[RMDB]
RNA sequence: GGGAACGACUCGAGUAGAGUCGAAAAGAUAUGGACAAUCGGGAGGAACUACUUCGCUAGUCGGAAACGACUGGCGAAGCCGUUGAUCGAUUGUCCUAAGUCAAAGGUUACUGUUCGCAGUAACCAACCGUAAUUAAGCGUUCGCGCUUAAUUACGGAAAAGAAACAACAACAACAAC
Reactivity to 2A3 in 0.01 (KOAc 150mM, MgCl2 10mM, bicine 150mM(pH8.5), 24C), signal-to-noise 2, nucleotides 027 to 126: g010a010u050a020u090g000g000a000c000a010a020u000c000g030g040g030a080g020g050a090a080c110u260a110c010u300u010c010g000c000u000a000g000u000c000g000g010a020a040a020c010g000a000c000u000g000g020c000g000a010a010g010c000c010g130u170u040g030a040u000c000g000a010u000u010g000u000c000c000u010a030a000g020u000c030a120a010a160g020g000u000u010a000c000u010g080u070u090c300g000c110a010g010u010a000a010c000c010a010a010
Reactivity to DMS in 0.01 (KOAc 150mM, MgCl2 10mM, bicine 150mM(pH8.5), 24C), signal-to-noise 2, nucleotides 027 to 126: g000a050u000a300u010g010g000a000c000a000a020u000c000g010g000g010a080g020g000a160a050c090u020a270c000u000u000c000g020c000u000a000g020u000c010g000g000a070a030a090c000g020a010c000u000g000g020c000g020a000a000g000c010c000g030u000u010g010a080u000c000g010a010u000u000g010u000c010c000u000a000a110g000u010c060a090a110a110g000g020u020u000a000c000u000g010u000u020c240g010c000a000g000u010a000a010c000c000a030a040